Structure probing data (DMS and 2A3) for a 170-nucleotide construct. The reactions ran in a buffer of 150 mM KOAc, 10 mM MgCl2 and 150 mM bicine (pH 8.5), at 24 C. Reactivities are given for positions 27 through 129.

[RMDB]
RNA sequence: GGGAACGACUCGAGUAGAGUCGAAAAACGUUGAUAUGGAUUUACUCCGAGGAGACGAACUACCACGAACAGGGGAAUCUCUACCCGUGGCGUCUCCGUUUGACGAGUAAGUCCUGAGUCAACAUGCAAGCCGUAUGGUUCGCCAUACGGAAAAGAAACAACAACAACAAC
Reactivity to DMS in 0.01 (KOAc 150mM, MgCl2 10mM, bicine 150mM(pH8.5), 24C), signal-to-noise 9, nucleotides 027 to 129: a050c130g020u000u000g020a020u030a160u050g000g020a060u010u010u020a020c000u020c000c000g030a050g050g000a030g030a020c030g000a100a030c100u060a300c060c020a000c000g000a070a260c180a000g010g000g010g010a080a070u050c040u030c040u040a170c130c040c010g010u010g020g020c000g030u020c000u010c020c020g020u010u010u020g020a120c300g010a030g020u020a010a010g020u020c000c000u000g020a060g020u000c000a020a010c010a050u000g030c140a030a040g000
Reactivity to 2A3 in 0.01 (KOAc 150mM, MgCl2 10mM, bicine 150mM(pH8.5), 24C), signal-to-noise 9, nucleotides 027 to 129: a010c070g000u000u000g010a010u020a020u070g010g000a000u000u000u000a010c000u000c000c000g020a030g000g000a010g020a000c010g010a050a050c090u210a080c080c010a010c010g060a140a030c070a160g030g010g020g070a110a200u130c030u010c020u070a080c000c020c010g000u000g000g000c000g000u000c000u000c000c000g000u070u040u070g010a010c000g000a000g000u000a000a000g000u000c000c010u000g000a010g040u000c000a000a000c010a010u120g080c040a090a050g040